The data come from the RNA Mapping Database (RMDB), library OK2TST. The record gives the reactivity of an RNA of 177 nucleotides to DMS. The RNA was probed in 150 mM KOAc, 10 mM MgCl2 and 150 mM bicine (pH 8.5) at 24 C. The DMS profile rests on 1,223 reads. Values cover nucleotides 27 to 126.
[RMDB]
RNA sequence: GGGAACGACUCGAGUAGAGUCGAAAAGAUAAUGUAAAGAACUGAGGGCUAGCUGGAGUUCCGCCUUCGUUGACACUAUCAUAAAACUCAGGAGGAAAGUAGGUCUUUUUUGGCCCCCAAACUAAGGUAACUACGCAACAUUCGUGUUGCGUAGUUAAAAAGAAACAACAACAACAAC
Reactivity to DMS in 0.01 (KOAc 150mM, MgCl2 10mM, bicine 150mM(pH8.5), 24C), signal-to-noise 2, nucleotides 027 to 126: g010a030u000a050a040u010g010u020a100a110a140g020a070a040c060u020g030a040g030g000g000c030u000a070g030c050u000g000g030a100g020u000u000c120c100g010c020c040u020u000c040g020u000u010g000a070c110a040c070u010a040u000c080a080u000a080a010a100a050c060u000c050a070g020g020a100g010g010a040a030a050g020u000a040g020g000u000c020u000u000u000u000u000u000g000g000c000c000c020c030c040a070a090a070c120u000a030a050g010g000